[RMDB]
RNA sequence: GGGAACGACUCGAGUAGAGUCGAAAAGGGGUCUCCCGACGAUCGAAAGGAGCGAGGAUCUACACUGAAGCCUCCACGGUGUAGGGAGCUCGCUUUCGGGAGGGAGACGGAGGCACCCAAACAUAGACCUUUCGUGUUCGCACGAAAGGUCUAUGAAGCAUAGAGAAACGUUCGCGUUUCUCUAUGCAAAAGAAACAACAACAACAAC
Reactivity to 2A3 in 0.01 (KOAc 150mM, MgCl2 10mM, bicine 150mM(pH8.5), 24C), signal-to-noise 2, nucleotides 027 to 156: g050g010g010g030u000c000u010c000c000c000g090a180c010g000a020u000c000g000a000a010a000g010g000a000g000c000g050a300g010g000a000u000c000u000a000c010a000c000u020g020a110a010g000c000c000u040c010c030a000c000g020g000u010g000u000a000g010g000g010a010g000c000u000c020g270c030u010u000u000c010g010g000g010a000g000g000g000a000g000a010c000g000g000a000g000g000c000a030c000c000c010a050a050a010c000a000u000a000g010a010c000c000u000u010u000c000g000u000g020u080u110c290g000c090a000c000g000a000a000a000g000g000u000c000u000a000u000g000a000a000